This 207-nucleotide RNA was probed chemically with 2A3. The reactions ran in a buffer of 150 mM KOAc, 10 mM MgCl2 and 150 mM bicine (pH 8.5), at 24 C. The 2A3 profile rests on 539 reads.
[RMDB]
RNA sequence: GGGAACGACUCGAGUAGAGUCGAAAACUCGCGCGAACAUAGAGGCGUGGAGCGCGACAUGAAUCAGCCUCCAUUAGAUUAAUGGUCGACAGAUCAGCGGCGAUCAGCGACCCAAUUAGAAGCCGCAACCGGAAGAGGAGACGCUCGACGGACGUCAACUAUGAUGGUCAUUCGUGACCAUCAUAGUAAAAGAAACAACAACAACAAC
Reactivity to 2A3 in 0.01 (KOAc 150mM, MgCl2 10mM, bicine 150mM(pH8.5), 24C), signal-to-noise 1, nucleotides 027 to 156: c000u000c000g000c000g000c000g060a190a020c020a030u020a010g050a010g000g000c050g050u000g000g030a030g010c040g000c010g040a040c040a220u080g210a110a110u170c130a080g050c040c000u000c000c000a220u200u230a010g060a090u110u120a130a110u300g000g000u000c000g000a070c020a060g020a000u000c020a030g000c000g040g050c000g000a010u000c040a000g000c000g000a000c000c000c000a040a120u170u180a090g000a190a000g000c020c010g000c000a010a010c020c020g080g030a180a000g010a040g010g000a040g050a110c050g080c020u020c020g020a030c020g040g000a070c020g070u070c020a010